[RMDB]
RNA sequence: GGGAACGACUCGAGUAGAGUCGAAAAGGGAUGUGCCAGACGACUUUCGCCGGCGGCUUGAAGACAUCAAGAAGCGCUUGGUCCGCAGGGAAAAGGCGAGGGUCCGACUGCGUGAUCGCCACCUGCGCAGAUACCUUACCUUCGGGUAAGGUAUCUGAAAAGAAACAACAACAACAAC
Reactivity to 2A3 in 0.01 (KOAc 150mM, MgCl2 10mM, bicine 150mM(pH8.5), 24C), signal-to-noise 2, nucleotides 027 to 126: g060g010g000a020u060g060u100g140c010c000a040g010a040c010g020a020c020u040u070u060c030g020c040c020g010g000c010g010g020c000u010u100g030a050a010g080a040c040a110u110c040a050a060g080a100a010g200c070g020c030u050u070g030g010u090c030c000g020c060a040g040g010g110a000a170a030a090g000g000c020g000a010g010g000g010u020c080c000g050a050c040u070g020c040g050u070g050a030u050c040g070c130c010a020c020c000u010g010c070g010
Reactivity to DMS in 0.01 (KOAc 150mM, MgCl2 10mM, bicine 150mM(pH8.5), 24C), signal-to-noise 3, nucleotides 027 to 126: g000g010g000a040u010g030u010g020c020c020a080g010a250c100g010a060c050u000u000u000c030g020c040c010g010g020c080g020g020c010u020u000g010a040a110g010a140c150a160u000c050a030a050g010a080a080g000c030g000c070u000u010g030g010u000c050c010g000c100a080g000g010g000a020a090a130a090g020g010c000g020a050g000g000g010u000c010c030g020a100c090u000g000c140g020u000g000a070u010c040g000c010c000a170c020c010u000g020c130g010
Source information: The data come from the RNA Mapping Database (RMDB), library OK2TST. An RNA of 177 nucleotides, treated with 2A3 and DMS and read out base by base. High 2A3 reactivity points to a flexible backbone, as in loops and unpaired stretches. DMS adducts were read by reverse transcription with MarathonRT. Values cover nucleotides 27 to 126.